The record gives the reactivity of an RNA of 207 nucleotides to 2A3 and DMS. Reactivities are given for positions 27 through 156. DMS adducts were read by reverse transcription with MarathonRT. The data come from the RNA Mapping Database (RMDB), library OK3TST. For 2A3, 2,367 sequencing reads were counted. Conditions: 150 mM KOAc, 10 mM MgCl2 and 150 mM bicine (pH 8.5), 24 C.
RNA sequence: GGGAACGACUCGAGUAGAGUCGAAAACACACCGGUCCGUGUCCGCCAUACCUGCUUCGGCCGUGGAUUACCUGCCAGACAACGCCGAGUCGCAGUUACGCGCCUUUCUGAAGGGGUUCCGGGAACCCGGCGUGGAACACAGUCCGCUUCAGAUGAGGUUAAAUUCUAUUUUCGAAUAGAAUUUAACAAAAGAAACAACAACAACAAC
Reactivity to 2A3 in 0.01 (KOAc 150mM, MgCl2 10mM, bicine 150mM(pH8.5), 24C), signal-to-noise 3, nucleotides 027 to 156: c050a000c020a050c010c010g020g020u060c040c000g040u050g060u100c020c020g020c040c010a070u080a130c010c020u080g010c030u040u020c040g060g000c070c040g040u070g020g030a030u040u180a140c030c030u130g080c050c040a060g020a140c040a060a020c060g020c000c010g060a030g130u290c080g000c030a010g000u010u070a020c020g030c000g000c010c010u050u170u080c030u040g020a000a010g010g020g010g000u020u060c050c030g090g030g010a030a030c010c000c000g000g010c020g020u060g010g010a060a010c090a010c000a090g070u050c030c020g050c040u010u020c010a020g020a060u050g060a030g200
Reactivity to DMS in 0.01 (KOAc 150mM, MgCl2 10mM, bicine 150mM(pH8.5), 24C), signal-to-noise 2, nucleotides 027 to 156: c030a030c070a100c040c030g000g070u010c040c040g000u010g000u010c030c000g030c030c040a130u010a080c080c040u000g010c040u000u000c010g020g020c020c040g010u000g000g000a300u000u000a090c050c010u000g010c070c010a130g010a140c040a070a100c070g020c000c010g010a050g020u000c040g010c020a090g030u000u000a050c070g020c060g030c000c020u000u000u010c040u020g020a070a080g000g040g000g040u000u000c020c030g040g010g020a110a130c040c010c060g000g030c030g060u010g010g000a060a130c040a060c050a080g000u000c040c020g010c030u000u000c030a080g000a100u000g010a180g010